Source: RMDB library OK1LIB, as collected in RNAgym. Structure probing data (2A3 and DMS) for a 177-nucleotide construct. The DMS profile rests on 3,808 reads. Conditions: 150 mM KOAc, 10 mM MgCl2 and 150 mM bicine (pH 8.5), 24 C.
RNA sequence: GGGAACGACUCGAGUAGAGUCGAAAAGACGCUGAUGCGAUCGACUGUAAGAUAGAUAGACUGAGUAGACAGAUACGUACGGCAAGUAUCGUCGCCAGAAAUACAGUCGCAAAUUGCCGUACGAAGAGGUACUGAGGGUAUUCGUACCCUCAGUACCAAAAGAAACAACAACAACAAC
Reactivity to 2A3 in 0.01 (KOAc 150mM, MgCl2 10mM, bicine 150mM(pH8.5), 24C), signal-to-noise 5, nucleotides 027 to 126: g090a010c020g010c050u130g060a090u300g030c030g060a080u040c020g020a030c000u010g010u010a000a040g100a270u140a060g150a050u140a120g100a090c020u040g010a010g090u130a100g020a020c060a000g060a040u070a120c010g030u030a000c020g010g000c000a010a000g040u030a030u140c060g000u020c000g020c010c000a010g060a020a040a000u070a030c000a000g020u000c000g010c040a030a110a040u010u020g000c000c000g000u000a010c010g000a060a040g070a030
Reactivity to DMS in 0.01 (KOAc 150mM, MgCl2 10mM, bicine 150mM(pH8.5), 24C), signal-to-noise 2, nucleotides 027 to 126: g000a100c060g000c000u010g000a030u030g010c000g000a150u020c040g010a030c000u000g000u000a010a110g030a040u010a190g000a100u020a180g000a300c010u000g000a120g000u000a050g030a000c020a050g030a020u030a030c010g020u000a010c020g020g000c010a010a050g040u000a050u010c050g000u000c000g010c080c000a030g030a040a070a110u010a010c000a010g000u000c000g000c200a040a080a080u020u010g010c000c010g000u010a090c080g010a050a030g000a190